An RNA of 177 nucleotides, treated with 2A3 and DMS and read out base by base.
For 2A3, 3,500 sequencing reads were counted.
Values cover nucleotides 27 to 126.
DMS adducts were read by reverse transcription with MarathonRT.
The DMS profile rests on 3,084 reads.
The reactions ran in a buffer of 150 mM KOAc, 10 mM MgCl2 and 150 mM bicine (pH 8.5), at 24 C.
[RMDB]
RNA sequence: GGGAACGACUCGAGUAGAGUCGAAAACGCGGAAUAGGCAAAAGUGUUGCGGACCUGCGUAGUUUCGAAAAGCGGACGGCCACGACGGCCCUUUGGGUGGGGUUGCAGCCGUAGCGCAUCGCAAAGAGCCUUAAUAUGUGUUCGCACAUAUUAAGGCAAAAGAAACAACAACAACAAC
Reactivity to 2A3 in 0.01 (KOAc 150mM, MgCl2 10mM, bicine 150mM(pH8.5), 24C), signal-to-noise 3, nucleotides 027 to 126: c010g000c010g020g050a080a130u100a150g100g000c020a020a030a070a100g300u290g060u170u050g010c020g040g030a050c000c000u020g000c000g000u020a090g070u050u050u100c010g000a020a010a000a020g010c010g000g010a010c000g000g010c000c030a130c070g170a040c000g030g000c000c010c010u100u160u160g280g020g080u200g000g000g010g010u000u010g010c010a000g010c000c010g000u010a000g020c000g000c000a010u030c000g010c030a030a050a020g110a020
Reactivity to DMS in 0.01 (KOAc 150mM, MgCl2 10mM, bicine 150mM(pH8.5), 24C), signal-to-noise 4, nucleotides 027 to 126: c020g030c030g010g010a050a060u000a300g000g020c020a020a080a220a160g030u000g000u000u000g020c020g000g020a230c150c020u000g020c000g020u000a070g020u000u000u010c010g000a020a010a130a020g000c000g000g000a030c010g010g000c000c040a100c020g000a270c050g000g000c000c000c000u000u020u010g020g010g030u010g010g030g000g000u010u010g000c020a300g010c020c010g020u000a020g010c020g000c000a040u000c020g000c300a060a040a090g010a140